[RMDB]
RNA sequence: GGGAACGACUCGAGUAGAGUCGAAAAAGCGUGUCGGUGCAGGCAAGAGACCACCGUAAGCGUCGCUGCAACCAAUUAAGCGCCGAUUCUCAUCAGCGCGAGUACGCUCUCGCUGCCUAAGCGAAGCGUCUCUGUCGGCCCGGGAUAUGCCCUCGGUGUUUCAAGGCAUCUUCGGAUGCCUUGAAACAAAAGAAACAACAACAACAAC
Reactivity to 2A3 in 0.01 (KOAc 150mM, MgCl2 10mM, bicine 150mM(pH8.5), 24C), signal-to-noise 1, nucleotides 027 to 156: a000g150c130g010u120g110u060c040g020g000u020g000c030a010g080g010c010a040a050g000a020g050a060c000c020a000c030c040g100u040a050a000g030c010g080u070c000g000c010u010g030c010a040a040c090c000a080a060u190u190a060a100g000c010g010c050c000g040a000u130u080c030u000c120a150u060c010a000g000c010g000c030g050a000g020u050a010c010g020c000u030c010u020c070g010c020u050g020c070c130u230a070a000g010c010g030a030a030g040c000g070u010c000u010c000u050g110u090c020g020g000c000c000c000g000g020g000a040u060a100u180g010c000c000c030u040c020g120g000u060

The record gives the reactivity of an RNA of 207 nucleotides to 2A3. The 2A3 profile rests on 506 reads. The reactions ran in a buffer of 150 mM KOAc, 10 mM MgCl2 and 150 mM bicine (pH 8.5), at 24 C.